An RNA of 177 nucleotides, treated with DMS and read out base by base. The data come from the RNA Mapping Database (RMDB), library TTRINS. Values cover nucleotides 27 to 126.
RNA sequence: GGGAACGACUCGAGUAGAGUCGAAAAGAUAUGGAGGUCUAUGGCCGAAAAGUUUAGGGUACAUCCGCGUCGGAAACGACGCCGAUGUACCCUAAACUUUCUAGACAGCCAUAGAGCCUCCUAAGUCGUCCAAUACAUUGUUCGCAAUGUAUUGGACAAAAGAAACAACAACAACAAC
Reactivity to DMS in 0.01 (KOAc 150mM, MgCl2 10mM, bicine 150mM(pH8.5), 24C), signal-to-noise 1, nucleotides 027 to 126: g010a120u020a300u000g000g000a060g000g010u000c000u000a000u010g020g030c000c010g000a100a000a020a050g010u010u000u010a010g000g000g010u000a000c000a010u030c000c300g000c000g000u010c020g010g000a110a140a240c000g010a000c000g020c000c100g020a000u000g010u000a030c050c000c000u000a000a000a000c000u000u000u000c300u000a170g020a290c300a170g040c000c000a030u000a000g040a100g040c000c010u000c010c000u000a000a050g000u010c100